RNA sequence: GGGAACGACUCGAGUAGAGUCGAAAAGAAACCGACGUUAGCGUCGUAAGCUAGCAAAAAGAAAGAAAGCAUCGAAACGCGGAUGCGAAACGCGAGAAAAGAACACGAUCCAGUGGAAGGAGAGAAAGGGAAUUACAUAGUUCGCUAUGUAAUUCCCAAAAGAAACAACAACAACAAC
Reactivity to 2A3 in 0.01 (KOAc 150mM, MgCl2 10mM, bicine 150mM(pH8.5), 24C), signal-to-noise 3, nucleotides 027 to 126: g070a010a030a000c050c030g010a040c030g010u040u080a000g030c020g050u010c020g030u140a000a060g000c010u050a000g040c060a010a070a070a080a010g220a040a100a000g100a030a120a000g060c020a030u060c040g030a040a130a030c110g030c120g180g000a060u060g040c010g030a110a080a010c040g010c010g030a000g020a050a170a010a000g110a030a020c090a010c100g040a030u080c010c030a020g030u050g060g100a030a030g060g050a070g020a020g030a020a110a060
Reactivity to DMS in 0.01 (KOAc 150mM, MgCl2 10mM, bicine 150mM(pH8.5), 24C), signal-to-noise 4, nucleotides 027 to 126: g010a120a060a120c040c000g030a120c110g010u020u020a010g000c000g010u020c130g020u030a060a110g060c000u020a030g020c050a040a070a050a140a080g010a080a060a040g010a060a070a110g010c040a020u000c050g000a060a110a100c200g020c050g000g010a020u000g000c080g020a040a080a080c060g000c050g000a110g000a050a070a090a120g000a070a100c100a100c020g010a090u010c070c040a090g020u030g010g000a090a070g010g000a060g010a070g010a100a060a070